[RMDB]
RNA sequence: GGGAACGACUCGAGUAGAGUCGAAAACUGAUGGAAAGACUGGGGGGAAGAAAAGCCGAAAUGGAUUCACGGUGCCUUGGAUGAAGGACGAGAGGGGAACUGCAAGCUCCUUCAACUGGUUCUGUCCAGUACCUUUAAGAUUCGUCUUAAAGGUACUAAAAGAAACAACAACAACAAC
Reactivity to 2A3 in 0.01 (KOAc 150mM, MgCl2 10mM, bicine 150mM(pH8.5), 24C), signal-to-noise 8, nucleotides 027 to 126: c020u050g030a060u090g040g050a060a060a040g050a040c050u050g010g000g000g010g020g020a040a020g050a030a150a010a000g030c010c030g050a090a050a050u140g040g040a030u070u070c060a020c080g020g010u050g020c010c000u050u050g030g020a060u060g070a060a030g030g010a010c040g020a010g020a020g070g020g010g020a040a030c010u080g020c050a060a040g010c010u000c000c000u030u060c020a040a040c040u040g020g020u040u010c010u020g040u020c020c000
Reactivity to DMS in 0.01 (KOAc 150mM, MgCl2 10mM, bicine 150mM(pH8.5), 24C), signal-to-noise 9, nucleotides 027 to 126: c050u010g010a100u020g010g000a090a070a100g010a070c060u010g010g000g000g010g010g010a060a080g000a050a060a080a100g010c030c030g010a060a090a080u020g010g000a090u010u000c100a090c060g000g010u000g000c050c040u010u000g000g010a080u010g000a070a040g010g000a050c070g000a090g000a090g010g000g010g010a040a070c070u010g000c120a070a100g010c090u000c010c010u010u000c060a060a100c090u000g000g000u000u000c020u000g000u010c110c070
Structure probing data (2A3 and DMS) for a 177-nucleotide construct. For DMS the reverse transcriptase was MarathonRT. The data come from the RNA Mapping Database (RMDB), libraries RFM100 and RFMREP. DMS (dimethyl sulfate) methylates the pairing face of unpaired adenines and cytosines.